Structure probing data (2A3 and DMS) for a 177-nucleotide construct. For DMS, 12,041 sequencing reads were counted. The data come from the RNA Mapping Database (RMDB), library OK2TST. 2A3 adducts were read by reverse transcription with SuperScript II with manganese. The reactions ran in a buffer of 150 mM KOAc, 10 mM MgCl2 and 150 mM bicine (pH 8.5), at 24 C.

RNA sequence: GGGAACGACUCGAGUAGAGUCGAAAAUUUUGCUUGGAAAUCAAAGGCUUAGUAGUUUUCUGCUGGGGAAACAUUGUCCAUCAACAAAGGGGUAACAUCCCAACUGUGCCUGGCUCAGGAAACUGGGCUCUAGUACCUAAUUCGUUAGGUACUAGAGAAAAGAAACAACAACAACAAC
Reactivity to 2A3 in 0.01 (KOAc 150mM, MgCl2 10mM, bicine 150mM(pH8.5), 24C), signal-to-noise 4, nucleotides 027 to 126: u050u070u030u080g020c010u030u070g030g040a060a170a130u100c050a140a120a030g080g000c000u050u050a020g020u020a010g020u090u050u090u090c030u040g050c040u030g020g000g020g060a050a060a000c020a050u020u070g020u020c020c020a060u060c030a030a060c010a070a110a020g040g010g000g000u040a040a040c010a080u080c000c010c000a020a030c050u040g010u030g060c010c010u020g050g000c020u020c060a010g050g020a050a030a030c010u010g000g020g000
Reactivity to DMS in 0.01 (KOAc 150mM, MgCl2 10mM, bicine 150mM(pH8.5), 24C), signal-to-noise 8, nucleotides 027 to 126: u000u000u010u000g010c070u000u000g010g000a090a090a090u000c100a080a100a100g010g000c020u000u000a040g020u010a060g010u000u000u000u000c020u000g020c080u000g010g010g000g000a080a070a110c100a100u010u010g000u000c020c030a050u000c100a080a070c090a030a070a100g010g000g000g000u000a070a090c190a120u010c010c000c010a080a090c110u010g010u000g010c060c020u000g010g000c010u000c010a020g010g010a060a050a130c010u000g000g000g010